Overview
Source: RMDB library OK3TST, as collected in RNAgym. Structure probing data (2A3) for a 207-nucleotide construct. The RNA was probed in 150 mM KOAc, 10 mM MgCl2 and 150 mM bicine (pH 8.5) at 24 C.
RNA sequence: GGGAACGACUCGAGUAGAGUCGAAAAGAAUGCUGCCGCCCACCUUAGCUUUAUUAAGGGGCACAAGGAAGGAGGAUUUUGUCUUUUCCAUACUUGGGCCAAAAUUUUAGGUGGAAGAGGUAAAUCUUUAGGGACAAAUAUGGUCACGGCAAUAGGAGCUUACGUGACAUUUCGAUGUCACGUAAGCAAAAGAAACAACAACAACAAC
Reactivity to 2A3 in 0.01 (KOAc 150mM, MgCl2 10mM, bicine 150mM(pH8.5), 24C), signal-to-noise 2, nucleotides 027 to 156: g030a010a040u050g040c050u030g000c020c010g000c020c000c000a060c000c000u050u080a080g060c030u150u190u030a090u140u300a220a010g150g000g000g030c000a000c040a050a000g050g040a030a060g040g030a010g000g040a020u010u050u080u300g090u050c110u080u160u070u000c010c000a020u110a300c030u020u010g000g050g000c000c030a020a150a060a110u130u230u090u100a010g000g000u000g020g020a030a000g110a020g050g020u090a070a090a120u040c010u000u050u050a100g000g090g000a020c010a030a100a000u090a100u090g040g010u040c000a030c090g060g000c010a030a020u050a290g160g000a010